[RMDB]
RNA sequence: GGGAACGACUCGAGUAGAGUCGAAAAACUGGAGCUACUGCUUUGUGGACUACGAGGAGGGACAGGGUAGAACCAUCAAAGUUAUCCAGCUCGACCACAACGUGCCGUCGUGGCCGCUGCACGAGCACACGUCGUCCUGAUUCGUCAGGACGACGUGAAAAGAAACAACAACAACAAC
Reactivity to 2A3 in 0.01 (KOAc 150mM, MgCl2 10mM, bicine 150mM(pH8.5), 24C), signal-to-noise 2, nucleotides 027 to 126: a000c020u020g020g000a030g070c070u150a020c060u080g040c000u060u020u020g030u040g000g020a020c000u020a020c040g090a040g150g070a150g050g100g040a030c080a070g130g000g010u020a030g000a110a080c050c010a030u150c030a000a030a000g020u070u040a020u070c030c010a020g000c020u040c020g080a090c010c030a060c030a070a090c030g030u100g050c050c000g110u170c040g080u130g070g000c000c050g000c020u020g000c010a010c070g010a030g000c020a010
Reactivity to DMS in 0.01 (KOAc 150mM, MgCl2 10mM, bicine 150mM(pH8.5), 24C), signal-to-noise 1, nucleotides 027 to 126: a180c090u010g000g020a010g010c150u000a130c230u000g000c010u000u000u000g050u000g000g010a300c030u030a070c020g000a110g020g010a090g000g040g030a080c080a080g010g010g010u010a030g000a050a060c010c010a030u000c070a020a070a040g000u010u010a060u010c000c020a020g020c080u000c050g000a110c030c140a110c150a050a090c040g010u020g010c030c060g000u000c190g000u010g000g000c050c020g000c060u010g000c040a030c040g000a080g000c070a140
This 177-nucleotide RNA was probed chemically with 2A3 and DMS.
High 2A3 reactivity points to a flexible backbone, as in loops and unpaired stretches.
DMS adducts were read by reverse transcription with MarathonRT.
High DMS reactivity at an A or C suggests that its Watson-Crick edge is free.
The RNA was probed in 150 mM KOAc, 10 mM MgCl2 and 150 mM bicine (pH 8.5) at 24 C.